[RMDB]
RNA sequence: GGGAACGACUCGAGUAGAGUCGAAAAUGGCAAAGGACUUGCACUGAUGGUCUGCAAAAGCAAUAACAGUCCAAAGGUAAUAAGGAUUUUCAUUUCAAUGUUAGACACUGUCCUGGAACCUCGGAGCUGAAAGUCCACCACUGUCCUACAGAAAGAGACCUAAUAGUAGUUUCGACUACUAUUAGGUAAAAGAAACAACAACAACAAC
Reactivity to DMS in 0.01 (KOAc 150mM, MgCl2 10mM, bicine 150mM(pH8.5), 24C), signal-to-noise 4, nucleotides 027 to 156: u010g010g010c050a060a110a100g020g010a030c030u000u010g020c080a090c040u000g020a300u010g000g020u000c020u050g000c060a050a080a080a130g010c070a100a120u000a100a090c020a050g020u000c020c020a040a080a180g010g010u000a070a130u000a160a090g010g010a100u000u000u010u000c050a140u000u000u000c080a090a090u010g000u010u000a120g020a150c070a040c070u000g000u010c010c010u000g010g020a090a090c020c020u000c070g040g010a080g040c080u000g000a050a040a060g010u000c000c010a100c010c020a030c050u000g020u000c000c010u000a170c060a090g010a050a060a110g000a230g000
Reactivity to 2A3 in 0.01 (KOAc 150mM, MgCl2 10mM, bicine 150mM(pH8.5), 24C), signal-to-noise 7, nucleotides 027 to 156: u040g020g020c080a040a060a140g020g000a030c020u030u030g010c040a020c050u060g030a100u110g030g030u020c020u020g000c030a070a080a040a050g060c040a030a070u120a150a060c020a010g010u000c010c000a090a040a020g030g010u060a090a080u110a150a050g030g010a020u060u060u070u100c060a100u070u150u140c110a130a080u120g050u130u140a050g030a040c050a010c140u080g010u040c010c010u020g050g040a040a040c010c000u020c040g020g030a040g030c020u060g050a090a020a000g010u000c000c000a010c020c000a020c070u030g030u020c020c000u050a050c040a030g150a050a120a010g110a010g030